[RMDB]
RNA sequence: GGGAACGACUCGAGUAGAGUCGAAAAGGCUACAUAACGCAUUUCAAAUGGGUCGAAUUGGGGCGUAGAGCGGGGACGGUCCACUGGAGAAUCGACCUCACCUGCGGCACAAGGACGUGCCUGGUUUUGAGUGAGGCAAGAUCUCCCUCGGCACUACCACAACAAUACGGUUCGCCGUAUUGUUGUGAAAAGAAACAACAACAACAAC
Reactivity to 2A3 in 0.01 (KOAc 150mM, MgCl2 10mM, bicine 150mM(pH8.5), 24C), signal-to-noise 4, nucleotides 027 to 156: g070g010c020u080a000c050a150u180a040a080c090g010c090a060u040u140u180c090a120a100a080u130g010g000g020u030c030g040a040a060u060u080g010g000g020g000c050g040u060a080g010a020g070c060g000g010g010g010a010c060g020g030u020c030c020a030c090u050g010g020a020g010a070a120u020c020g080a300c040c000u000c000a010c000c000u030g000c000g000g000c030a030c010a060a110g230g090a090c160g010u000g030c010c000u060g100g010u090u040u170u140g160a190g010u000g000a010g000g000c010a020a040g020a010u000c000u000c000c000c020u050c010g010g020c030a020c080u060a050c040
Reactivity to DMS in 0.01 (KOAc 150mM, MgCl2 10mM, bicine 150mM(pH8.5), 24C), signal-to-noise 1, nucleotides 027 to 156: g000g010c020u040a150c130a110u000a150a150c090g000c030a120u010u040u010c110a040a060a070u010g020g030g030u020c030g050a080a230u000u010g010g060g000g040c050g000u010a050g010a100g040c040g020g000g070g000a110c090g030g020u010c080c010a100c050u000g050g030a130g030a070a170u000c000g010a060c000c020u000c030a030c000c060u010g010c150g000g010c030a040c010a110a240g050g010a230c180g000u010g010c000c000u030g050g000u000u000u000u000g020a110g000u020g050a040g020g000c000a040a060g020a180u000c020u000c010c000c060u010c050g000g000c030a060c110u000a120c050